[RMDB]
RNA sequence: GGGAACGACUCGAGUAGAGUCGAAAACGGCCCGGGACGAUGCCGAAGAUGCGCGUGACGAUGCGGCUGCAUCGGCUGCUAUCGCAUCCGGCUUGGCUUCGGCGUUCAUCAUUGGCGAAAACACCUUCGCCUCGCGCACCGCAGCGAUGGCAUGGAGGAUCGUAUACGAUUUCGAUCGUAUACGAUCAAAAGAAACAACAACAACAAC
Reactivity to 2A3 in 0.01 (KOAc 150mM, MgCl2 10mM, bicine 150mM(pH8.5), 24C), signal-to-noise 4, nucleotides 027 to 156: c040g090g010c020c040c010g030g010g000a020c060g020a040u120g010c010c010g010a040a010g020a030u040g010c070g000c010g060u070g030a020c000g000a000u010g020c040g130g080c230u220g020c130a120u130c070g030g000c040u020g000c050u120a040u130c030g000c030a030u000c000c020g000g000c010u020u070g050g020c000u040u030c050g000g040c020g020u010u040c010a070u020c020a060u060u120g060g010c040g060a010a040a030a030c090a100c020c000u050u070c030g000c020c000u000c010g000c000g020c010a170c120c090g050c100a080g000c010g010a050u180g000g020c040a070u140g010g030a020g060
Reactivity to DMS in 0.01 (KOAc 150mM, MgCl2 10mM, bicine 150mM(pH8.5), 24C), signal-to-noise 2, nucleotides 027 to 156: c040g000g020c030c010c020g010g000g060a050c040g010a040u010g000c000c020g010a110a100g020a050u010g020c030g000c140g020u000g010a080c000g020a020u000g010c010g020g060c140u010g040c080a030u000c110g010g010c000u000g000c030u000a060u010c020g020c000a110u010c020c030g000g030c040u010u000g030g010c010u030u000c020g020g010c050g000u000u000c030a060u010c040a200u000u000g010g010c040g000a100a080a080a080c170a090c020c020u010u000c010g010c000c000u000c000g010c020g030c030a300c060c080g020c060a150g010c020g030a070u000g010g000c040a080u010g040g000a160g010

Chemical mapping of a 207-nucleotide RNA with 2A3 and DMS. Reactivities are given for positions 27 through 156. For DMS, 5,162 sequencing reads were counted. It was measured as part of the RMDB library OK3TST. For DMS the reverse transcriptase was MarathonRT.